[RMDB]
RNA sequence: GGGAACGACUCGAGUAGAGUCGAAAAAUGCUGUCAUUUCACAACCACAAAAAAUAAUCCACCCUUGAGUUAGUGGCUCAGGUGGAUUAUUCGUCCAAUCGGCCGAUCCCUUGCAGGGAUCCGAGCUGAUUAAUAAGUUGUUCGCAACUUAUUAAUCAAAAGAAACAACAACAACAAC
Reactivity to 2A3 in 0.01 (KOAc 150mM, MgCl2 10mM, bicine 150mM(pH8.5), 24C), signal-to-noise 9, nucleotides 027 to 126: a000u090g010c060u070g100u170c040a100u040u130u100c100a070c030a110a100c030c030a070c140a050a120a020a020a000a000u010a000a000u000c000c000a010c020c030c040u060u090g000a000g010u040u120a070g050u140g300g000c000u000c000a000g000g000u000g000g000a000u000u000a000u000u000c000g020u000c020c020a060a100u090c030g030g000c010c010g010a000u000c000c010c000u010u130g100c120a080g010g000g000a010u000c010c060g010a020g010c020u010
Reactivity to DMS in 0.01 (KOAc 150mM, MgCl2 10mM, bicine 150mM(pH8.5), 24C), signal-to-noise 9, nucleotides 027 to 126: a060u010g010c070u010g010u010c050a070u010u010u000c070a070c100a080a130c050c040a100c190a000a020a090a080a020a010u000a000a000u000c000c000a000c010c020c210u020u020g010a010g010u000u000a130g020u020g010g000c000u000c000a050g000g020u000g000g000a000u000u000a000u000u000c080g010u010c080c090a050a050u010c030g010g010c050c020g000a020u000c000c000c000u000u030g010c220a160g000g000g000a010u000c050c080g000a100g020c020u000